Conditions: 150 mM KOAc, 10 mM MgCl2 and 150 mM bicine (pH 8.5), 24 C. Structure probing data (2A3 and DMS) for a 177-nucleotide construct. For DMS the reverse transcriptase was MarathonRT. DMS (dimethyl sulfate) methylates the pairing face of unpaired adenines and cytosines.
RNA sequence: GGGAACGACUCGAGUAGAGUCGAAAAGAGGCAUGGGACAACAUGUGCUCCGGAACAAGUGUGUGGCGUUGGCCCGAGGAGGUCCUGUGCCAACGGCAUCACUGAUUGAUGGCCAUUGAUUUUGAGAUAUUACGGAUCAUUUCGAUGAUCCGUAAUAAAAAGAAACAACAACAACAAC
Reactivity to 2A3 in 0.01 (KOAc 150mM, MgCl2 10mM, bicine 150mM(pH8.5), 24C), signal-to-noise 7, nucleotides 027 to 126: g160a020g000g010c020a010u020g020g020g040a040c030a150a010c020a180u130g060u130g160c010u010c000c040g020g050a090a060c060a130a090g070u090g010u030g030u070g300g010c070g080u080u100g120g030c010c020c030g030a080g040g020a040g000g180u070c010c000u030g000u030g000c000c000a000a010c010g000g020c010a010u010c000a010c070u090g110a160u120u120g030a030u040g130g080c000c030a050u070u170g130a200u100u080u110u180g130a140g000a050
Reactivity to DMS in 0.01 (KOAc 150mM, MgCl2 10mM, bicine 150mM(pH8.5), 24C), signal-to-noise 9, nucleotides 027 to 126: g010a120g010g020c010a010u010g000g010g010a080c110a140a160c130a080u000g020u010g020c020u000c050c050g000g000a090a070c130a090a060g020u010g020u000g020u010g010g010c020g010u000u000g000g010c030c040c050g000a080g010g010a160g010g010u000c000c000u000g000u000g000c010c000a020a020c090g000g010c010a020u000c010a040c160u010g000a150u000u010g010a060u000g010g010c020c020a140u010u010g000a120u000u000u000u000g000a200g000a240